[RMDB]
RNA sequence: GGGAACGACUCGAGUAGAGUCGAAAAACGGAUGAUACGUCAUCCGAAGGACAUUUUGCCCAGAUCCGUGGCCUAUUCAGAAAUGUGGCCUGUGAUUAGGCCGCAGAUCUGGGUGAAAUGUCCUCAAUUGGCACAAUAAAUUCGUUUAUUGUGCCAAAAAAGAAACAACAACAACAAC
Reactivity to 2A3 in 0.01 (KOAc 150mM, MgCl2 10mM, bicine 150mM(pH8.5), 24C), signal-to-noise 5, nucleotides 027 to 126: a000c000g000g000a000u000g000a000u010a060c220g100u010c000a000u010c000c000g000a030a010g000g000a000c000a000u000u000u000u000g020c000c000c000a000g000a000u010c010c010g010u010g000g000c000c000u010a010u000u020c010a020g230a170a280a070u270g110u120g140g070c030c010u030g020u010g010a010u020u000a000g000g000c000c000g000c000a000g000a000u000c000u000g000g000g000u010g000a000a000a000u000g000u000c000c000u000c000a000a000
Reactivity to DMS in 0.01 (KOAc 150mM, MgCl2 10mM, bicine 150mM(pH8.5), 24C), signal-to-noise 4, nucleotides 027 to 126: a150c000g010g000a010u000g000a030u010a060c180g010u000c000a010u000c000c000g010a060a010g010g010a010c000a000u000u000u000u000g000c000c000c010a010g000a000u000c000c050g040u000g010g010c000c000u000a010u000u000c010a030g010a080a100a120u020g010u010g000g000c060c030u000g010u000g000a020u000u000a000g010g010c000c000g040c000a020g000a010u000c000u000g000g000g030u000g000a000a000a000u000g010u000c000c000u000c060a040a100